[RMDB]
RNA sequence: GGGAACGACUCGAGUAGAGUCGAAAAGCUUCUUUCAAAAGACUGUCUGGAAUGCUCUACCAGAAGAUUUCAGCGAUCGGCUCCUUGAUACAGCAUCAAGAACCAUCAUGCCAUUUUCAACCAAAAUUGUCACUAAACAUCAACGGACAAAGAAACCAGCAUUCAUUAGUUUCGACUAAUGAAUGCUAAAAGAAACAACAACAACAAC
Reactivity to 2A3 in 0.01 (KOAc 150mM, MgCl2 10mM, bicine 150mM(pH8.5), 24C), signal-to-noise 6, nucleotides 027 to 156: g010c010u050u020c000u060u170u100c060a110a110a050a060g030a060c070u070g060u110c010u020g010g050a090a080u110g050c020u030c030u080a080c020c040a050g020a100a040g000a090u090u170u130c050a010g010c020g070a050u050c070g030g000c020u050c020c000u020u000g000a010u070a110c100a080g060c020a050u010c010a040a000g030a050a040c030c000a020u040c030a030u120g030c020c000a070u080u070u050u120c060a080a070c030c000a070a060a090a120u050u040g020u030c010a020c130u120a140a150a050c040a070u090c030a050a080c070g000g010a030c040a020a090a030g100a080a100a030c130c050
Reactivity to DMS in 0.01 (KOAc 150mM, MgCl2 10mM, bicine 150mM(pH8.5), 24C), signal-to-noise 2, nucleotides 027 to 156: g020c030u000u010c050u000u000u010c110a060a090a140a130g000a110c080u010g020u000c010u020g000g010a130a050u000g010c030u000c060u000a160c110c060a220g000a000a080g000a100u000u000u000c040a080g000c050g030a110u000c110g100g010c010u010c080c010u010u000g000a070u000a070c130a180g020c090a120u000c020a050a040g010a030a060c000c010a080u010c050a060u000g060c010c010a090u010u010u010u000c100a060a080c020c060a040a060a090a100u000u010g000u010c010a130c040u010a080a060a050c050a080u000c060a070a080c080g030g000a080c040a020a030a110g000a070a080a080c060c070